[RMDB]
RNA sequence: GGGAACGACUCGAGUAGAGUCGAAAAGAUAUGGAUCCGCAUCAUUAGCUAGAUAUCGGAAACGAUAUGUAGCAACGAUGAUGGCGGAUCCUAAGUCAAAACAUACUUCGGUUCGCCGAAGUAUGAACGUUAGAGAGGGGUUCGCCCCUCUCUAACGAAAAGAAACAACAACAACAAC
Reactivity to DMS in 0.01 (KOAc 150mM, MgCl2 10mM, bicine 150mM(pH8.5), 24C), signal-to-noise 2, nucleotides 027 to 126: g020a030u000a300u020g000g000a000u020c000c000g040c000a040u000c000a040u000u000a240g010c000u000a000g030a020u010a000u000c020g020g000a110a070a150c000g000a010u000a010u000g000u000a010g020c000a200a100c300g000a020u030g010a000u000g020g040c010g020g010a010u010c000c000u000a000a130g010u020c030a100a140a070a230c000a010u000a020c000u000u000c000g000g000u000u010c260g010c000c000g000a000a000g000u000a000u000g020a050a130
Reactivity to 2A3 in 0.01 (KOAc 150mM, MgCl2 10mM, bicine 150mM(pH8.5), 24C), signal-to-noise 2, nucleotides 027 to 126: g000a020u060a020u100g010g010a000u010c000c020g000c000a000u020c010a020u100u240a050g000c000u020a010g000a280u010a000u030c020g000g000a050a020a010c000g030a000u030a020u060g300u030a040g020c010a020a030c270g140a020u020g010a010u070g200g170c000g000g000a000u000c000c000u000a000a010g000u000c040a020a060a090a020c000a000u010a000c010u000u010c000g030g020u050u110c300g060c150c020g000a000a000g000u000a000u000g000a050a000